[RMDB]
RNA sequence: GGGAACGACUCGAGUAGAGUCGAAAAAAAGAUAUGGAUCGCAGCGUUCUGAUGACCUAUACUCAGUAUAUAUGUCGGAAACGACAUAUAGAACCGUAUAGCAAGGAACCUGCGAUCCUAAGUCAAACAUCAUGGUAAACUUCGGUUUACCAUGAUGAAAAGAAACAACAACAACAAC
Reactivity to 2A3 in 0.01 (KOAc 150mM, MgCl2 10mM, bicine 150mM(pH8.5), 24C), signal-to-noise 1, nucleotides 027 to 126: a000a020a000g030a010u060a000u010g000g000a020u020c000g000c000a000g020c050g140u010u010c020u030g270a300u020g020a020c000c000u000a000u000a000c040u080c070a030g020u010a010u000a000u000a000u000g000u000c000g020g000a030a010a010c000g000a000c000a000u010a000u010a000g020a040a010c000c000g020u010a000u020a010g000c020a060a150g010g000a000a010c010c000u000g010c000g010a000u000c000c000u000a000a000g010u000c000a020a070a060
Reactivity to DMS in 0.01 (KOAc 150mM, MgCl2 10mM, bicine 150mM(pH8.5), 24C), signal-to-noise 4, nucleotides 027 to 126: a040a100a110g000a010u000a090u010g000g000a000u000c000g010c000a000g010c300g010u000u000c000u000g010a030u020g000a050c300c010u000a000u000a000c010u010c220a160g000u000a270u000a000u000a000u020g020u000c000g010g000a020a020a040c000g020a010c000a010u000a000u000a010g010a090a040c160c290g000u000a010u000a000g000c010a040a030g010g000a010a000c000c000u000g020c000g000a000u010c000c010u000a000a030g000u000c010a110a080a200
Record summary:
Structure probing data (2A3 and DMS) for a 177-nucleotide construct. DMS adducts were read by reverse transcription with MarathonRT. The RNA was probed in 150 mM KOAc, 10 mM MgCl2 and 150 mM bicine (pH 8.5) at 24 C. Values cover nucleotides 27 to 126.